[RMDB]
RNA sequence: GGGAACGACUCGAGUAGAGUCGAAAAAAUCCCCGGCGCUCCGCCGUCUAGGUGACGCGCAGUCGCCCCCCCAGGCAGCCUAGGCGGCGGCAGCUGCUGCGGCGACUGCAAAGGCCGAUUUGGAGUGAUGAUAUCGUUAUUUCGAUAACGAUAUCAUAAAAGAAACAACAACAACAAC
Reactivity to 2A3 in 0.01 (KOAc 150mM, MgCl2 10mM, bicine 150mM(pH8.5), 24C), signal-to-noise 3, nucleotides 027 to 126: a000a010u060c000c010c000c000g000g010c000g010c000u000c000c000g000c000c010g010u000c010u000a020g000g000u030g080a130c070g040c020g010c110a040g080u100c040g050c000c000c000c000c000c010c030a030g040g000c000a010g000c000c000u010a010g000g020c000g000g000c010g000g000c010a000g000c010u060g000c000u010g000c010g000g000c020g060a080c040u090g000c040a080a040a070g070g000c000c010g020a030u110u060u140g120g010a110g050u140g040
Reactivity to DMS in 0.01 (KOAc 150mM, MgCl2 10mM, bicine 150mM(pH8.5), 24C), signal-to-noise 8, nucleotides 027 to 126: a100a080u000c010c000c000c030g010g000c020g000c010u000c000c020g020c000c010g020u000c010u000a010g000g010u000g010a120c180g010c080g010c130a120g010u010c080g020c020c010c010c010c020c010c030a150g000g020c020a290g000c000c010u000a020g000g010c000g000g000c010g000g000c060a010g020c010u020g030c010u010g000c030g010g010c020g010a110c060u010g010c160a080a110a110g000g000c010c010g000a220u020u010u000g000g020a190g020u020g010

Source: RMDB libraries RFM100 and RFMREP, as collected in RNAgym. Chemical mapping of a 177-nucleotide RNA with 2A3 and DMS. Reactivities are given for positions 27 through 126. For 2A3 the reverse transcriptase was SuperScript II with manganese.